[RMDB]
The record gives the reactivity of an RNA of 177 nucleotides to DMS and 2A3.

RNA sequence: GGGAACGACUCGAGUAGAGUCGAAAACUCGUUCACGGUUAGGUCUGUCUCUGGCAGAGCAGACGGUCAGGAGGAUGAGGUCACCAUCUUCACGAAGCCAAAGCCAAAUUCCGCCUUGUCCUGUAAAAGGGAUAUACUGAUUCGUCAGUAUAUCCCUAAAAGAAACAACAACAACAAC
Reactivity to DMS in 0.01 (KOAc 150mM, MgCl2 10mM, bicine 150mM(pH8.5), 24C), signal-to-noise 5, nucleotides 027 to 126: c020u000c000g030u000u000c050a080c070g000g010u000u010a100g020g010u000c010u000g000u010c010u020c030u030g030g020c120a140g000a040g010c020a000g000a030c040g000g010u010c050a160g010g010a050g000g000a030u010g000a080g010g010u010c060a090c070c040a020u010c050u010u000c020a080c080g000a080a090g010c030c030a060a140a120g000c020c050a040a120a140u020u010c010c010g000c020c010u000u010g000u000c000c010u000g010u010a030a040a090
Reactivity to 2A3 in 0.01 (KOAc 150mM, MgCl2 10mM, bicine 150mM(pH8.5), 24C), signal-to-noise 5, nucleotides 027 to 126: c010u010c010g070u120u070c050a030c120g030g050u070u110a100g060g020u010c020u030g120u090c010u020c010u060g140g020c100a010g000a000g000c010a010g000a020c020g010g010u060c050a040g020g040a030g000g000a010u050g030a030g040g060u060c010a030c050c030a040u070c020u060u060c070a100c160g040a060a010g010c010c000a110a030a000g010c010c000a020a100a030u090u010c020c000g020c020c000u030u060g040u050c010c010u050g080u150a000a070a060
The RNA was probed in 150 mM KOAc, 10 mM MgCl2 and 150 mM bicine (pH 8.5) at 24 C.
For DMS, 12,048 sequencing reads were counted.